This 207-nucleotide RNA was probed chemically with 2A3. The data come from the RNA Mapping Database (RMDB), library VIROID.

RNA sequence: GGGAACGACUCGAGUAGAGUCGAAAAUCAUCUCGACAAGAGGCGGCAAUCCUCAGUGCUCUUACUCUUUUCUGAUAAAGUGGAGACUGCUGGACUCGCCGCCCAAGUUCGAGCAUGAGCCAUCUCCGAACGAAGGAUCGCGCCGGGGGCGGAUCAGGCAUGUCCUAAAGUUCGCUUUAGGACAUGCAAAAGAAACAACAACAACAAC
Reactivity to 2A3 in 0.01 (KOAc 150mM, MgCl2 10mM, bicine 150mM(pH8.5), 24C), signal-to-noise 3, nucleotides 027 to 156: u040c000a000u000c010u000c000g000a000c000a100a080g150a160g020g000c010g000g050c010a000a020u000c000c010u000c010a020g010u200g300c010u000c000u050u250a090c030u090c030u140u160u230u200c270u150g100a190u130a300a040a000g010u040g000g000a010g000a000c000u020g040c080u010g000g010a020c030u050c190g000c000c000g010c010c000c000a020a000g010u030u040c000g010a000g010c020a020u000g000a010g030c010c040a020u040c030u020c030c010g150a140a080c040g040a090a080g200g010a040u050c060g030c000g040c120c010g120g010g000g090g000c000g020g020a010u040c000a010g110

For 2A3 the reverse transcriptase was SuperScript II with manganese. Reactivities are rounded to 0.1 and cut off at 0 and 3. The 2A3 profile rests on 1,270 reads.